Chemical mapping of a 177-nucleotide RNA with 2A3.
The data come from the RNA Mapping Database (RMDB), library RFMREP.
Values cover nucleotides 27 to 126.
RNA sequence: GGGAACGACUCGAGUAGAGUCGAAAAGAAGAUGUGCUCUUUUGAGCAGUCUCAACUUUGCUCGUUCCCGUUAUGGGAAAAAUUUUGGAAGGUCUUGGUAGGAACGGGUGGAUCUUAUAAUUUUUGACCAAGUCUUACGGUUCGCCGUAAGACUUGGAAAAGAAACAACAACAACAAC
Reactivity to 2A3 in 0.01 (KOAc 150mM, MgCl2 10mM, bicine 150mM(pH8.5), 24C), signal-to-noise 1, nucleotides 027 to 126: g010a010a010g010a110u020g030u050g300c020u080c070u050u190u200u300g030a010g000c010a000g000u000c020u000c000a050a080c000u030u050u110g060c030u020c060g020u000u010c000c000c020g000u060u230a090u100g060g000g000a050a000a000a020a070u150u210u060u080g150g000a020a020g010g010u000c000u110u040g020g000u100a020g000g100a070a000c050g010g050g000u040g000g000a020u010c030u050u050a100u050a240a110u110u130u030u020u000g010a010